[RMDB]
RNA sequence: GGGAACGACUCGAGUAGAGUCGAAAACGAUCGUUAAUAUCGAUCGUUAUGCUAAUAAUAACUCCUGUUAGCAACGUGCGCAGAUACACACAGACAUGAGAUUCAGGGAACAACAGAGCCACACGUCCUCCUAAACAGUCUUCGGACUGUUUAGGAGAAAAGAAACAACAACAACAAC
Reactivity to 2A3 in 0.01 (KOAc 150mM, MgCl2 10mM, bicine 150mM(pH8.5), 24C), signal-to-noise 9, nucleotides 027 to 126: c000g000a000u000c000g010u070u080a140a030u140a060u250c000g000a000u000c000g010u000u020a060u090g010c010u030a020a030u070a160a090u080a160a080c040u040c010c010u030g020u040u030a010g010c020a020a030c070g060u080g020c030g000c030a010g030a130u120a040c050a000c000a000c020a030g060a060c020a060u130g050a060g020a070u080u060c020a020g030g040g030a050a040c020a020a010c000a030g040a010g030c000c010a040c010a010c030g050u050c010
Reactivity to DMS in 0.01 (KOAc 150mM, MgCl2 10mM, bicine 150mM(pH8.5), 24C), signal-to-noise 4, nucleotides 027 to 126: c000g000a000u000c000g020u000u050a100a120u050a080u020c010g000a010u000c000g000u000u010a040u010g020c040u010a050a060u010a090a130u020a090a110c130u010c050c010u000g010u000u000a020g020c000a130a100c150g010u000g000c060g000c060a040g020a140u000a070c070a050c070a080c070a020g020a070c100a060u000g000a150g010a070u020u000c050a070g010g000g000a020a060c130a040a050c110a030g010a060g000c050c020a040c050a080c110g000u000c140
Structure probing data (2A3 and DMS) for a 177-nucleotide construct. The RNA was probed in 150 mM KOAc, 10 mM MgCl2 and 150 mM bicine (pH 8.5) at 24 C.